The record gives the reactivity of an RNA of 170 nucleotides to DMS and 2A3. The DMS profile rests on 88,202 reads. Source: RMDB library 15KLIB, as collected in RNAgym. 2A3 adducts were read by reverse transcription with SuperScript II with manganese.
RNA sequence: GGGAACGACUCGAGUAGAGUCGAAAAUUGAAGGUAAAACAGCCUGUGGGUGAAACACACCCACAGGGCCCAAUGGGCGCUAGCACUCCGGUAUCACGGUACCUUUGUGCGCCUGUUUUACCGAAGGAGAGUAUAGUCUUCGGACUAUACAAAAGAAACAACAACAACAAC
Reactivity to DMS in 0.01 (KOAc 150mM, MgCl2 10mM, bicine 150mM(pH8.5), 24C), signal-to-noise 9, nucleotides 027 to 129: u030u030g030a130a120g010g010u030a010a000a010a010c010a040g010c000c000u000g020u030g000g010g020u000g010a100a130a080c280a230c010a000c000c010c020a000c030a010g010g020g000c000c020c000a010a040u100g000g000g020c040g020c030u050a100g030c000a020c000u000c010c000g020g020u010a000u000c030a110c240g020g010u010a020c010c020u020u030u020g010u030g020c000g000c020c000u000g020u000u000u000u000a000c020c000g000a050a070g020g020a100g020a150
Reactivity to 2A3 in 0.01 (KOAc 150mM, MgCl2 10mM, bicine 150mM(pH8.5), 24C), signal-to-noise 7, nucleotides 027 to 129: u110u110g050a080a010g000g000u010a000a000a010a000c000a000g000c000c000u000g000u000g000g000g000u010g030a060a100a010c150a010c000a000c040c000c000a000c000a000g000g000g000c000c000c000a010a020u300g000g000g000c010g000c100u120a060g000c010a000c000u000c000c010g000g000u000a010u020c040a030c210g150g000u000a000c000c000u000u000u010g000u000g000c000g000c000c000u000g000u000u000u000u000a000c000c000g010a000a000g060g080a040g000a010